This 177-nucleotide RNA was probed chemically with DMS. Source: RMDB library OK2TRN, as collected in RNAgym. For DMS, 1,695 sequencing reads were counted. Conditions: 150 mM KOAc, 10 mM MgCl2 and 150 mM bicine (pH 8.5), 24 C.
[RMDB]
RNA sequence: GGGAACGACUCGAGUAGAGUCGAAAAGAGGGGGAUGGUACGGCUCACGGUCCAGCUGGGGCCUUUCUUCUGGAUAGAAGAUAUGAUCGAAGAGAUAGAGGCCUCGGCCUCCGCAGGGAUCUACACCGCUGUUCAGGAAAUUCGUUUCCUGAACAGCAAAAGAAACAACAACAACAAC
Reactivity to DMS in 0.01 (KOAc 150mM, MgCl2 10mM, bicine 150mM(pH8.5), 24C), signal-to-noise 2, nucleotides 027 to 126: g010a070g020g020g010g000g000a140u010g000g010u010a080c150g000g000c060u020c080a190c060g020g010u000c080c110a130g010c020u000g010g000g000g040c010c000u010u000u000c010u000u000c010u000g000g020a090u010a050g010a040a010g010a050u010a090u000g020a050u000c040g010a120a130g010a230g000a050u010a140g010a030g000g010c010c000u000c090g000g010c000c030u000c010c040g020c090a060g020g000g000a110u010c050u000a120c170a070c110c110